[RMDB]
RNA sequence: GGGAACGACUCGAGUAGAGUCGAAAAACCCUCGCCCGAUGUUCGCUGAUUCGUCAGCCGCAUGCCCAGGUGGCCGCGAUCUUCAAGGGUACGGCGCGGAUAGGUCCGCGCUGAUCGUUUUCCUCCAACCGCAUAACCGGCUUCGGCCGGUUAUGAACGUGUGCUAUAUGUUCGCAUAUAGCACACGAAAAGAAACAACAACAACAAC
Reactivity to 2A3 in 0.01 (KOAc 150mM, MgCl2 10mM, bicine 150mM(pH8.5), 24C), signal-to-noise 1, nucleotides 027 to 156: a030c010c010c010u030c080g040c000c000c050g090a060u100g040u120u080c050g000c040u040g020a110u070u040c150g040u030c090a030g050c000c000g020c010a010u140g080c000c010c010a050g070g060u060g030g020c010c020g000c010g030a030u030c030u090u030c070a040a110g020g040g000u040a140c070g010g000c020g000c000g000g020a040u060a250g170g050u070c000c000g000c020g020c010u000g010a000u020c090g030u110u010u120u050c000c020u000c020c000a040a110c000c040g040c030a000u000a000a000c010c000g010g000c070u010u030c130g080g010c010c010g000g000u000u000a000u000g000a000a000

Chemical mapping of a 207-nucleotide RNA with 2A3. As a SHAPE reagent, 2A3 marks flexible, mostly unpaired nucleotides at the ribose 2'-OH. Conditions: 150 mM KOAc, 10 mM MgCl2 and 150 mM bicine (pH 8.5), 24 C.